[RMDB]
RNA sequence: GGGAACGACUCGAGUAGAGUCGAAAAUUAUGAGAGGUAGUCACCUCUCAGCCCCUCCACCUUGGGGUGCCCUAGUCGAGCACUGCAGUCUCGAUGGCAAGGCUAAGGACGUCGCAAUGACGUAAGGCAGUGGUAGACAGUUCGCUGUCUACCACUGAAAAGAAACAACAACAACAAC
Reactivity to 2A3 in 0.01 (KOAc 150mM, MgCl2 10mM, bicine 150mM(pH8.5), 24C), signal-to-noise 2, nucleotides 027 to 126: u110u070a070u050g030a010g010a030g000g060u140a060g160u300c190a020c030c020u000c000u020c000a000g030c050c000c000c000u030c030c000a100c000c020u030u050g000g000g000g000u030g000c000c000c020u020a030g000u010c000g000a000g050c070a040c200u240g060c090a080g060u040c000u000c000g000a000u040g020g000c050a040a020g000g000c020u000a030a030g120g020a050c000g000u000c010g060c120a170a260u300g000a000c010g020u010a000a050g050g000
Reactivity to DMS in 0.01 (KOAc 150mM, MgCl2 10mM, bicine 150mM(pH8.5), 24C), signal-to-noise 2, nucleotides 027 to 126: u000u000a050u000g000a020g010a010g010g010u000a140g040u050c170a260c010c000u000c000u000c000a020g020c040c000c000c000u000c070c110a300c040c010u000u000g000g000g030g030u000g000c000c000c180u010a270g020u000c000g010a010g030c090a100c090u000g020c170a140g000u020c010u000c000g000a030u010g010g020c230a090a130g020g000c000u000a050a130g010g000a040c000g000u000c000g010c160a090a070u010g000a020c010g010u000a010a040g010g000
This 177-nucleotide RNA was probed chemically with 2A3 and DMS. For 2A3 the reverse transcriptase was SuperScript II with manganese. For 2A3, 1,746 sequencing reads were counted. For DMS, 1,176 sequencing reads were counted. Source: RMDB library VIROID, as collected in RNAgym. The reactions ran in a buffer of 150 mM KOAc, 10 mM MgCl2 and 150 mM bicine (pH 8.5), at 24 C.